About this RNA: Structure probing data (2A3 and DMS) for a 177-nucleotide construct.
[RMDB]
RNA sequence: GGGAACGACUCGAGUAGAGUCGAAAAUAUAUCUUAAUGAUGAUACAUUUCCUUCAGUGCAUAGUUCAACUGAUAAGGAUAACUUCCUAUAUGAAGAUAAAAAUUCAUCGAAUUUAGUCUUUCGCUCGAAAAGUAUCUUGUUCGCAAGAUACUUUUCAAAAGAAACAACAACAACAAC
Reactivity to 2A3 in 0.01 (KOAc 150mM, MgCl2 10mM, bicine 150mM(pH8.5), 24C), signal-to-noise 3, nucleotides 027 to 126: u030a010u010a000u000c010u050u250a260a110u280g070a040u030g010a010u000a040c020a050u080u000u000c000c000u000u020c010a000g000u000g080c040a160u170a270g040u080u190c030a100a060c010u010g020a070u050a160a040g000g010a000u010a060a010c010u030u030c000c030u050a060u020a030u300g020a010a020g010a020u090a050a150a020a010a020u040u030c040a100u100c270g020a050a020u040u050u030a030g020u000c000u040u100u040c060g000c040u040c060
Reactivity to DMS in 0.01 (KOAc 150mM, MgCl2 10mM, bicine 150mM(pH8.5), 24C), signal-to-noise 3, nucleotides 027 to 126: u000a070u000a010u010c010u010u010a140a170u010g010a070u000g000a070u000a020c100a080u010u000u000c010c000u010u000c000a010g010u000g020c130a150u000a130g000u010u000c120a100a060c010u010g000a090u020a050a040g000g000a040u000a070a110c200u000u000c010c030u000a090u010a080u000g000a020a000g000a030u000a010a100a100a030a030u000u000c000a070u010c190g010a030a020u000u000u000a260g010u000c010u000u000u010c100g010c200u000c180
About this RNA
For 2A3, 2,513 sequencing reads were counted. For DMS the reverse transcriptase was MarathonRT.